[RMDB]
RNA sequence: GGGAACGACUCGAGUAGAGUCGAAAACAGAUCGGCCCAAUGGGGUAAUCCUGGAAUAUGAAGUCAAGUAUUAUGAGAAGGAUCAGAAUGAGCGAAGCUAUCGUAUAGUUCGGACAGCUGCCAGGAACUGUUAGUGCCUAUUCGUAGGCACUAACAGAAAAGAAACAACAACAACAAC
Reactivity to 2A3 in 0.01 (KOAc 150mM, MgCl2 10mM, bicine 150mM(pH8.5), 24C), signal-to-noise 2, nucleotides 027 to 126: c010a020g110a180u120c070g050g030c010c010c020a020a170u180g000g000g000g000u060a000a120u030c000c010u010g000g080a000a050u140a050u130g080a060a010g090u060c040a070a100g030u050a060u250u030a070u140g030a040g040a130a030g130g010a030u020c010a020g110a130a030u100g000a010g070c020g050a080a010g040c080u070a030u180c010g050u030a010u080a090g000u000u030c000g030g030a000c010a010g030c040u010g000c040c000a000g000g070a000a000
Reactivity to DMS in 0.01 (KOAc 150mM, MgCl2 10mM, bicine 150mM(pH8.5), 24C), signal-to-noise 2, nucleotides 027 to 126: c090a120g000a050u000c120g000g040c060c010c010a160a110u000g030g020g000g030u000a010a110u010c020c010u000g000g020a110a070u000a050u010g010a120a070g020u000c060a070a110g000u000a060u010u030a050u010g020a130g000a110a090g020g000a090u010c030a110g010a060a050u000g010a160g000c070g020a060a140g010c140u000a060u010c110g010u010a200u020a150g010u000u000c050g020g000a050c030a040g010c050u000g010c020c000a050g000g020a060a160